[RMDB]
RNA sequence: GGGAACGACUCGAGUAGAGUCGAAAAGACUACCAUGGUUGCAACGGGUAACGGGCAAUCAGGGUUCGAUUCCGGAGAGGGAGCCUGAGAAACGGCUACCACAUCUAAGGAAGCCAGCAGGCUCGGGCCCGAAUUGCAGUUUCGACUGCAAUUCGGGAAAAGAAACAACAACAACAAC
Reactivity to 2A3 in 0.01 (KOAc 150mM, MgCl2 10mM, bicine 150mM(pH8.5), 24C), signal-to-noise 2, nucleotides 027 to 126: g040a030c000u070a010c010c000a020u020g000g000u000u000g180c130a300a300c120g030g140g000u130a230a010c040g000g020g000c020a000a000u000c000a030g030g000g050u000u120c060g040a070u060u000c000c000g040g050a140g020a080g140g060g000a000g000c000c010u130g000a130g130a050a080a000c090g000g000c000u040a060c000c020a000c000a050u240c050u070a040a120g000g000a000a000g010c000c000a000g030c070a050g010g000c000u020c000g000g040g000
Reactivity to DMS in 0.01 (KOAc 150mM, MgCl2 10mM, bicine 150mM(pH8.5), 24C), signal-to-noise 1, nucleotides 027 to 126: g000a030c200u080a160c000c000a000u000g000g050u040u000g020c010a050a110c020g000g000g000u090a150a220c040g000g000g020c000a000a060u000c000a060g000g020g000u040u040c000g000a260u000u000c000c000g000g000a090g020a100g040g040g000a040g000c040c000u000g000a220g000a120a270a160c130g030g080c000u000a140c040c000a260c140a110u050c300u120a210a090g000g030a250a000g000c010c050a040g020c000a000g000g000c080u000c000g010g000g000